[RMDB]
RNA sequence: GGGAACGACUCGAGUAGAGUCGAAAAGAAGUUGUGUUCGCACAACUUCAAAAGCUAGUAGGUACUGGGCAAGUAGUUCCUAGUAGUAGCCCGUUCAAGUAAAAAUCAACCUCUUCGGAGGUUGAAACAUGUAAGGCUAGUUCGCUAGCCUUACAUGAAAAGAAACAACAACAACAAC
Reactivity to 2A3 in 0.01 (KOAc 150mM, MgCl2 10mM, bicine 150mM(pH8.5), 24C), signal-to-noise 3, nucleotides 027 to 126: g010a000a000g000u000u000g010u020g000u030u150c180g030c080a000c000a000a010c000u000u000c000a000a010a000a020g000c000u010a010g040u000a010g150g010u020a010c010u060g090g140g050c130a160a020g100u070a000g020u110u020c000c000u010a010g030u000a010g000u020a020g050c000c000c000g010u100u090c140a100a040g040u110a120a070a040a010a040u030c000a000a010c010c000u020c000u060u090c290g120g000a000g000g000u000u000g000a010a000a010
Reactivity to DMS in 0.01 (KOAc 150mM, MgCl2 10mM, bicine 150mM(pH8.5), 24C), signal-to-noise 4, nucleotides 027 to 126: g000a010a000g010u000u000g020u010g010u010u020c210g040c010a010c000a000a000c000u010u000c000a040a050a110a180g010c020u000a010g000u000a020g000g000u000a010c010u010g010g020g010c300a110a190g010u000a030g010u000u010c000c010u000a020g000u000a020g010u000a080g000c000c000c000g000u010u000c150a090a110g010u010a020a050a080a110a100u000c000a000a000c000c000u000c000u000u000c180g030g010a000g000g020u000u000g000a010a050a090
The record gives the reactivity of an RNA of 177 nucleotides to 2A3 and DMS. DMS adducts were read by reverse transcription with MarathonRT. The reactions ran in a buffer of 150 mM KOAc, 10 mM MgCl2 and 150 mM bicine (pH 8.5), at 24 C. For 2A3, 3,670 sequencing reads were counted.